[RMDB]
RNA sequence: GGGAACGACUCGAGUAGAGUCGAAAAACUGGGUGGCGAUUGGGCAUAAGCCUGUAAACACCUUUACCAGUGUAAUCGUUGCCGGAAGGAACGUUGUGAGGGCAGGAUACUUGGGCAUGGCAUUGUCUGUGUCGAUCUGGCUGUCCUUGUGGAAGCGGACGUAUUUGAAGUUCGCUUCAAAUACGUCAAAAGAAACAACAACAACAAC
Reactivity to 2A3 in 0.01 (KOAc 150mM, MgCl2 10mM, bicine 150mM(pH8.5), 24C), signal-to-noise 3, nucleotides 027 to 156: a000c050u130g040g000g000u020g020g000c000g040a020u020u010g010g000g000c030a100u170a220a160g010c040c010u040g000u050a050a020a010c000a020c000c000u000u040u070a100c030c020a000g010u010g020u040a010a010u010c010g020u010u030g040c010c000g050g020a050a010g060g010a070a020c070g000u010u000g030u050g020a000g000g010g000c010a010g020g030a080u060a130c050u100u140g060g010g000c020a020u010g020g000c080a170u110u300g030u090c020u010g020u010g030u000c020g050a090u040c020u030g100g000c000u000g050u070c000c000u010u050g040u030g030g080a070a030g080c090g040
Reactivity to DMS in 0.01 (KOAc 150mM, MgCl2 10mM, bicine 150mM(pH8.5), 24C), signal-to-noise 2, nucleotides 027 to 156: a100c030u000g020g010g020u000g020g030c000g010a130u000u020g020g080g020c000a100u000a070a220g040c000c010u000g010u000a070a100a090c030a030c010c020u000u000u010a130c140c080a070g000u000g020u010a020a040u000c020g030u000u010g000c000c020g040g000a100a120g010g010a060a100c090g010u010u010g000u000g000a040g010g010g000c010a040g020g000a180u000a010c030u000u000g020g020g000c020a010u010g010g050c040a290u010u010g010u010c010u010g020u010g010u000c010g000a040u000c010u000g030g010c000u000g000u000c010c030u010u000g030u000g020g010a100a110g020c090g010